RNA sequence: GGGAACGACUCGAGUAGAGUCGAAAAAAUACAAUCAAGGUGAAAAGAUGCAUCGAUGACAAUUGUCGGCUUGAUUCUGUCAGUUGCCGAAGUCGAAUACGUUACCUGCAAUCAGACGGACAUUCGACAUAGAACGACAGUUCGCUGUCGUUCUAUGAAAAGAAACAACAACAACAAC
Reactivity to 2A3 in 0.01 (KOAc 150mM, MgCl2 10mM, bicine 150mM(pH8.5), 24C), signal-to-noise 9, nucleotides 027 to 126: a000a000u220a040c070a030a040u070c040a080a060g070g000u080g080a020a060a120a080g110a120u190g040c020a010u040c030g170a170u090g040a040c070a100a190u070u090g080u040c010g000g010c010u020u040g020a050u140u010c060u090g050u020c010a070g050u210u050g110c010c000g030a030a010g040u010c010g000a010a000u050a110c020g010u010u060a070c020c010u060g060c060a090a180u140c020a080g030a060c010g020g000a010c010a050u020u010c010g010a000
Reactivity to DMS in 0.01 (KOAc 150mM, MgCl2 10mM, bicine 150mM(pH8.5), 24C), signal-to-noise 9, nucleotides 027 to 126: a060a040u050a070c180a090a080u010c060a060a090g000g020u000g000a070a050a110a100g020a090u020g010c020a040u010c040g010a100u020g010a100c160a060a070u020u020g010u000c000g010g000c020u010u010g010a070u030u020c070u010g000u010c030a080g010u020u010g010c010c000g010a040a100g010u000c000g010a020a020u000a060c050g000u000u010a080c080c030u010g000c130a120a100u030c110a070g010a050c040g000g010a110c140a030u000u000c020g000a050

Notes: Source: RMDB library OK1LIB, as collected in RNAgym. An RNA of 177 nucleotides, treated with 2A3 and DMS and read out base by base. The DMS profile rests on 29,418 reads.